[RMDB]
RNA sequence: GGGAACGACUCGAGUAGAGUCGAAAAGCAAACAAGCAAAAAGGCAAGGACGAACCUUCCUCAAGCACUGAAUGUUUUGCGAGUGAAUGGUAAGCGCGAGAAAUGAUGAUACAAGUUGAAAAGACAUUAUUUUACUAUAUUUCGAUAUAGUAAAAUAAAAAGAAACAACAACAACAAC
Reactivity to DMS in 0.01 (KOAc 150mM, MgCl2 10mM, bicine 150mM(pH8.5), 24C), signal-to-noise 6, nucleotides 027 to 126: g010c050a030a050a120c060a070a120g010c010a020a050a100a090a030g000g010c100a040a020g020g010a240c220g030a140a170c030c020u000u010c000c000u000c040a100a140g010c020a080c150u020g010a110a100u020g010u000u000u000u000g010c030g010a100g000u010g020a110a030u010g010g000u010a040a030g010c040g000c060g000a050g000a060a070a040u020g020a050u000g010a090u020a050c130a040a100g010u010u000g000a040a060a080a100g000a110c120a070u010
Reactivity to 2A3 in 0.01 (KOAc 150mM, MgCl2 10mM, bicine 150mM(pH8.5), 24C), signal-to-noise 8, nucleotides 027 to 126: g030c020a010a000a050c020a060a040g020c020a070a040a010a000a000g060g030c100a030a030g010g010a050c070g060a080a190c010c000u010u010c010c010u030c020a050a010g010c020a020c110u130g060a110a140u070g060u020u080u040u080g010c020g010a040g020u100g050a060a080u100g040g020u080a050a030g030c010g000c030g040a030g110a050a080a050u170g030a050u040g020a010u070a150c100a110a080g010u030u020g080a090a080a040a020g060a010c020a030u010